Source: RMDB library TTRINS, as collected in RNAgym.
An RNA of 177 nucleotides, treated with DMS and read out base by base.
RNA sequence: GGGAACGACUCGAGUAGAGUCGAAAAGAUAUGGAUUCCUGGAGACAUGAACCACAGGCAAUGAAACCACUCGGAAACGAGUGAGUUUCAUUGCCUGUGGUUCAACAGCUCUUGGAAUCCUAAGUCACGUCAUAAUUAUGUUCGCAUAAUUAUGACGAAAAGAAACAACAACAACAAC
Reactivity to DMS in 0.01 (KOAc 150mM, MgCl2 10mM, bicine 150mM(pH8.5), 24C), signal-to-noise 1, nucleotides 027 to 126: g000a030u000a300u020g000g000a000u000u000c000c000u000g000g010a010g020a050c120a240u000g000a030a020c000c000a020c000a000g000g000c000a000a000u020g000a050a020a030c000c000a080c020u010c000g030g000a120a100a200c000g020a000g020u010g010a030g000u000u010u000c000a040u000u000g020c050c020u000g050u000g010g000u010u000c000a000a030c220a150g000c000u000c010u000u010g000g000a000a000u000c010c010u010a020a070g020u000c040a250
The reactions ran in a buffer of 150 mM KOAc, 10 mM MgCl2 and 150 mM bicine (pH 8.5), at 24 C. Reactivities are given for positions 27 through 126.